The data come from the RNA Mapping Database (RMDB), library M2PK50.
This 177-nucleotide RNA was probed chemically with DMS and 2A3.
The RNA was probed in 150 mM KOAc, 10 mM MgCl2 and 150 mM bicine (pH 8.5) at 24 C.
For 2A3, 2,862 sequencing reads were counted.
The DMS profile rests on 2,617 reads.
Reactivities are given for positions 27 through 126.
For DMS the reverse transcriptase was MarathonRT.
For 2A3 the reverse transcriptase was SuperScript II with manganese.
RNA sequence: GGGAACGACUCGAGUAGAGUCGAAAAGCAAAGGGGUUCGCCCCUUUGCAAAUAAACCGAUCAAAUAUAAGAAUAUAACGCGAAGAUCGGUAAAGAGCAAAAAAAGGUUCUACUUCGGUAGAACCAAUCUAAAUAAGCAGUUCGCUGCUUAUUUAGAAAAAGAAACAACAACAACAAC
Reactivity to DMS in 0.01 (KOAc 150mM, MgCl2 10mM, bicine 150mM(pH8.5), 24C), signal-to-noise 3, nucleotides 027 to 126: g030c000a000a000a000g010g030g000g040u000u010c260g010c010c000c000c010u000u000u000g010c000a010a030a060u000a060a100a050c010c000g010a000u000c010a060a130a110u010a090u010a100a180g010a180a070u010a110u020a070a120c140g010c090g010a080a190g000a010u000c000g000g000u000a020a040a100g010a160g000c140a000a000a030a060a060a060a120g000g000u000u000c000u000a000c010u020u020c140g020g010u000a000g010a000a010c000c000a000a020
Reactivity to 2A3 in 0.01 (KOAc 150mM, MgCl2 10mM, bicine 150mM(pH8.5), 24C), signal-to-noise 2, nucleotides 027 to 126: g030c000a000a020a000g000g050g010g040u040u090c120g170c000c000c000c020u000u000u000g000c000a000a010a010u010a000a020a000c000c000g010a020u010c020a020a160a030u230a050u060a170a060g030a170a050u220a060u050a280a100c070g020c040g180a130a020g010a040u000c000g010g020u010a020a040a000g040a010g020c070a000a010a040a000a020a040a160g010g000u010u010c000u000a000c010u010u100c250g060g020u020a000g000a010a000c010c000a010a000